[RMDB]
Record summary
The record gives the reactivity of an RNA of 177 nucleotides to 2A3 and DMS. The data come from the RNA Mapping Database (RMDB), library OK2TST. 2A3 adducts were read by reverse transcription with SuperScript II with manganese. The reactions ran in a buffer of 150 mM KOAc, 10 mM MgCl2 and 150 mM bicine (pH 8.5), at 24 C. For DMS the reverse transcriptase was MarathonRT.
RNA sequence: GGGAACGACUCGAGUAGAGUCGAAAAGUGGGAGUGGUUUUUCUGCCCUGGAUAUUUCUUCUGGGAGAGAGAAUGCCUUGACCUCAUAGGUCAGUUGAAGACCAAGGCCCGGGUAGGAGCUCAUGCGUCAAGGUUACGAAUUCGUUCGUAACCUUGAAAAAGAAACAACAACAACAAC
Reactivity to 2A3 in 0.01 (KOAc 150mM, MgCl2 10mM, bicine 150mM(pH8.5), 24C), signal-to-noise 2, nucleotides 027 to 126: g040u080g010g030g020a130g000u050g050g050u020u070u000u040u090c010u030g140c020c000c010u010g000g020a040u040a080u180u250u050c030u040u000c010u040g060g030g020a110g010a010g000a020g020a120a040u050g020c030c000u030u010g040a020c000c040u030c060a160u220a060g040g010u010c010a000g030u140u180g100a070a020g000a020c030c010a000a010g070g030c020c040c040g000g030g000u050a050g000g040a020g010c020u000c050a030u130g070c040g090
Reactivity to DMS in 0.01 (KOAc 150mM, MgCl2 10mM, bicine 150mM(pH8.5), 24C), signal-to-noise 4, nucleotides 027 to 126: g020u000g010g010g000a100g030u010g020g010u000u000u000u010u000c020u010g010c040c000c010u010g010g010a050u000a060u000u010u010c100u010u000c020u000g000g020g000a090g010a080g010a060g010a060a080u010g010c010c010u000u000g000a090c030c000u000c170a100u010a120g000g010u000c050a060g010u010u010g010a110a100g000a030c050c020a120a060g000g000c010c040c050g010g010g020u000a050g000g000a100g000c060u000c050a050u010g020c100g000